[RMDB]
RNA sequence: GGGAACGACUCGAGUAGAGUCGAAAAGCUGAUUGGCGAAUCAGGAUCGGGAAAAUCUACGCUGCUGGCGAUUCUCGCCGGACUGGAUGACGGCAGUAGCGGAGAGGUCAGUCUGGUCGGGAAACCGACUGAUCCACGCUUUCGAGCGUGGAUCAGUAAAAGAAACAACAACAACAAC
Reactivity to DMS in 0.01 (KOAc 150mM, MgCl2 10mM, bicine 150mM(pH8.5), 24C), signal-to-noise 2, nucleotides 027 to 126: g010c020u000g000a010u010u000g020g000c060g000a090a050u020c020a050g000g010a070u000c020g000g040g000a060a120a080a080u070c020u010a060c070g040c050u030g000c040u010g000g010c010g020a190u000u000c040u000c140g000c000c020g010g040a090c180u020g000g000a050u030g000a180c170g000g000c000a020g010u000a020g000c040g010g000a010g000a080g010g000u010c130a050g010u030c090u050g030g010u030c030g010g040g010a040a080a120c030c050g000
Reactivity to 2A3 in 0.01 (KOAc 150mM, MgCl2 10mM, bicine 150mM(pH8.5), 24C), signal-to-noise 4, nucleotides 027 to 126: g040c010u020g010a050u030u160g030g030c040g120a030a050u050c010a040g120g020a080u080c040g020g040g050a020a040a040a120u020c030u020a030c040g010c020u100g020c010u030g020g090c030g090a090u050u000c050u020c060g060c010c030g050g020a060c060u120g000g000a020u050g020a030c030g050g090c010a040g030u110a020g030c010g010g010a030g000a010g010g070u000c000a000g010u000c020u050g050g020u070c030g050g000g000a050a050a130c020c000g000

About this RNA:
This 177-nucleotide RNA was probed chemically with DMS and 2A3. Reactivities are rounded to 0.1 and cut off at 0 and 3. Reactivities are given for positions 27 through 126.